Structure probing data (DMS and 2A3) for a 177-nucleotide construct. For DMS the reverse transcriptase was MarathonRT. 2A3 adducts were read by reverse transcription with SuperScript II with manganese. Reactivities are rounded to 0.1 and cut off at 0 and 3. For 2A3, 703 sequencing reads were counted. Conditions: 150 mM KOAc, 10 mM MgCl2 and 150 mM bicine (pH 8.5), 24 C.
[RMDB]
RNA sequence: GGGAACGACUCGAGUAGAGUCGAAAAGAAACCUUCAGCAUUACAAUGGUUUGUGUCUCUCCAGCCACACUAUAUAGACAGAUGUAUAGUAAGUAUAUCUAUGGUAUGAAAAUUUUAUGGGAAGAGAGUUCUAACUGACGUUCGCGUCAGUUAGAACAAAAGAAACAACAACAACAAC
Reactivity to DMS in 0.01 (KOAc 150mM, MgCl2 10mM, bicine 150mM(pH8.5), 24C), signal-to-noise 2, nucleotides 027 to 126: g040a030a070a060c020c000u030u000c100a100g000c080a110u000u050a110c160a070a060u000g010g000u010u010u000g020u050g000u020c000u020c000u000c000c000a070g000c050c120a040c090a040c040u000a060u000a040u030a040g020a010c250a080g000a120u000g020u000a000u010a040g020u070a060a110g010u000a040u050a030u010c080u030a150u000g010g000u090a030u020g000a010a050a030a060u020u030u000u010a070u000g000g000g000a060a120g000a060g040a080
Reactivity to 2A3 in 0.01 (KOAc 150mM, MgCl2 10mM, bicine 150mM(pH8.5), 24C), signal-to-noise 2, nucleotides 027 to 126: g030a110a060a000c000c000u030u050c060a120g100c080a040u080u080a110c040a020a210u180g110g010u050u000u080g090u000g080u020c000u000c020u020c140c050a000g040c040c000a000c000a000c000u000a000u040a030u000a080g080a100c070a040g220a090u000g130u020a010u060a060g040u030a130a060g060u080a110u000a060u040c080u000a070u180g060g000u050a040u140g110a040a080a080a000u110u260u250u250a140u170g070g010g000a050a000g050a030g000a000